[RMDB]
RNA sequence: GGGAACGACUCGAGUAGAGUCGAAAAGAUAUGGAGCGAGAAUAGCGCCACACGAACUCGGAAACGAGGGAGUGUGGAACUACGCUACUCGCUCCUAAGUCAAAAGGACAUUGUUCGCAAUGUCCAACAACCAGUCAGAGUUCGCUCUGACUGGUUGAAAAGAAACAACAACAACAAC
Reactivity to DMS in 0.01 (KOAc 150mM, MgCl2 10mM, bicine 150mM(pH8.5), 24C), signal-to-noise 2, nucleotides 027 to 126: g000a090u000a300u010g000g030a020g020c000g000a020g000a260a160u010a010g000c040g040c000c000a000c000a000c000g000a300a280c050u000c000g000g000a190a070a120c000g000a000g040g000g010a300g010u000g010u000g000g000a020a010c080u010a280c020g010c010u000a040c000u000c010g020c000u000c000c000u000a010a070g000u060c020a060a050a110a030g020g000a010c000a020u010u000g010u000u000c160g040c000a010a050u010g000u000c000c000a110a080
Reactivity to 2A3 in 0.01 (KOAc 150mM, MgCl2 10mM, bicine 150mM(pH8.5), 24C), signal-to-noise 2, nucleotides 027 to 126: g000a010u060a020u250g000g010a000g000c010g000a000g060a190a230u110a060g030c000g030c000c000a000c000a000c000g010a020a010c010u000c010g030g040a070a070a040c030g000a000g000g010g040a020g000u000g000u010g000g000a000a000c020u150a020c030g000c000u010a010c000u000c000g020c000u010c000c000u000a000a010g000u020c000a000a020a040a170g030g000a010c000a000u010u020g030u090u090c270g010c120a010a000u000g000u000c000c000a010a010